Chemical mapping of a 177-nucleotide RNA with DMS and 2A3.

RNA sequence: GGGAACGACUCGAGUAGAGUCGAAAAAUUUUUCAUCUUGGUGCAAUGUACUCCCAUGUUUACCUUAGCACCUCUAAUCGUACUAUGGUUUGGCUGGGGAUUGAAUGCCGUAAUUGUCCCGACAGCGCAAGACUAACAUUUUCGAAUGUUAGUCUUGAAAAGAAACAACAACAACAAC
Reactivity to DMS in 0.01 (KOAc 150mM, MgCl2 10mM, bicine 150mM(pH8.5), 24C), signal-to-noise 9, nucleotides 027 to 126: a080u000u010u010u010u000c050a050u000c080u000u000g010g010u000g020c050a110a030u000g010u000a080c170u000c010c020c010a090u010g020u000u010u000a050c080c050u000u000a070g010c020a020c020c060u010c180u010a070a070u000c160g010u000a060c070u000a030u000g010g010u000u000u000g010g010c020u000g000g000g010g010a060u000u010g010a080a080u000g010c030c050g010u000a050a080u010u010g010u000c010c010c010g000a110c110a050g010c120g010
Reactivity to 2A3 in 0.01 (KOAc 150mM, MgCl2 10mM, bicine 150mM(pH8.5), 24C), signal-to-noise 5, nucleotides 027 to 126: a000u120u110u010u050u100c020a040u020c040u060u060g030g000u030g020c020a030a040u060g010u070a070c040u020c020c010c020a030u080g060u060u140u060a100c000c000u030u050a020g010c010a020c050c000u000c040u080a070a080u080c040g070u030a030c040u070a080u160g080g000u030u080u090g050g000c010u030g000g000g000g040a030u030u120g070a100a040u090g050c010c000g000u010a040a080u080u040g020u000c000c020c000g030a040c020a030g030c050g000
Reactivities are rounded to 0.1 and cut off at 0 and 3.